[RMDB]
RNA sequence: GGGAACGACUCGAGUAGAGUCGAAAACUCGGUAACGGUGCGACUAAAUGAGAUGACGGAGGAGGCCUUCCUAUCACCCUUGCUUAACUUCUUCCUCGACGGACUGGCUGCCAUUAUUCCUUGUCCCCGUCUUCCGGGUAUUCGUACCCGGAAGACGAAAAGAAACAACAACAACAAC
Reactivity to 2A3 in 0.01 (KOAc 150mM, MgCl2 10mM, bicine 150mM(pH8.5), 24C), signal-to-noise 1, nucleotides 027 to 126: c030u000c060g060g050u060a050a050c030g010g050u060g090c010g030a000c030u100a110a130a090u160g040a120g040a130u080g010a030c050g040g050a030g000g020a010g020g000c000c010u030u060c010c000u020a030u110c050a080c020c020c000u010u040g000c000u100u130a070a080c000u050u020c000u070u010c000c000u060c040g080a030c080g000g090a090c020u050g050g010c030u020g000c020c030a070u100u070a070u060u060c000c030u000u030g010u030c020c010c000
Reactivity to DMS in 0.01 (KOAc 150mM, MgCl2 10mM, bicine 150mM(pH8.5), 24C), signal-to-noise 1, nucleotides 027 to 126: c080u000c030g030g000u010a040a080c090g010g000u000g000c130g010a080c140u010a020a090a100u010g000a170g000a170u010g000a060c090g020g020a160g000g040a140g000g030c040c040u000u020c020c000u000a130u010c090a050c050c020c000u000u000g000c060u000u000a040a100c080u010u010c050u000u000c000c000u000c060g000a120c080g000g010a070c110u020g000g000c020u000g010c040c030a070u000u000a090u010u000c000c040u000u000g020u000c010c010c010